[RMDB]
RNA sequence: GGGAACGACUCGAGUAGAGUCGAAAAGGUAGGUACUGCCCAAUCUACCGAGGCAACGAGUGCGCCUCAAAAGUACUCGAAAGAUCUCGGAAUGCCACAUAGAGAUCAAGGUAUUCCAGGGCAGAAAGGGUAGGUACAUGUUCGCAUGUACCUACCCAAAAGAAACAACAACAACAAC
Reactivity to 2A3 in 0.01 (KOAc 150mM, MgCl2 10mM, bicine 150mM(pH8.5), 24C), signal-to-noise 3, nucleotides 027 to 126: g000g000u010a000g000g000u030a140c000u030g010c000c000c010a000a020u020c000u000a000c000c000g030a010g060g100c010a070a050c150g010a030g000u040g000c030g120c010c010u200c020a020a040a000a000g000u000a000c000u000c000g010a020a050a030g040a060u040c000u010c090g010g120a080a000u070g020c040c000a150c020a090u260a060g090a040g000a010u080c080a030a040g060g000u010a000u000u040c000c010a020g000g000g000c000a000g030a020a020a000
Reactivity to DMS in 0.01 (KOAc 150mM, MgCl2 10mM, bicine 150mM(pH8.5), 24C), signal-to-noise 1, nucleotides 027 to 126: g000g000u010a000g080g020u000a130c000u000g030c000c000c080a240a000u030c000u000a000c020c010g000a000g000g030c050a120a020c000g000a030g040u020g000c000g010c000c000u080c300a070a000a010a040g140u000a000c000u000c000g060a140a120a060g000a020u000c010u000c020g050g100a120a220u070g030c180c130a130c100a090u000a140g000a020g030a030u000c000a260a150g000g090u100a030u040u000c000c000a110g000g000g000c000a000g000a050a100a130
Chemical mapping of a 177-nucleotide RNA with 2A3 and DMS. The DMS profile rests on 1,068 reads. High DMS reactivity at an A or C suggests that its Watson-Crick edge is free.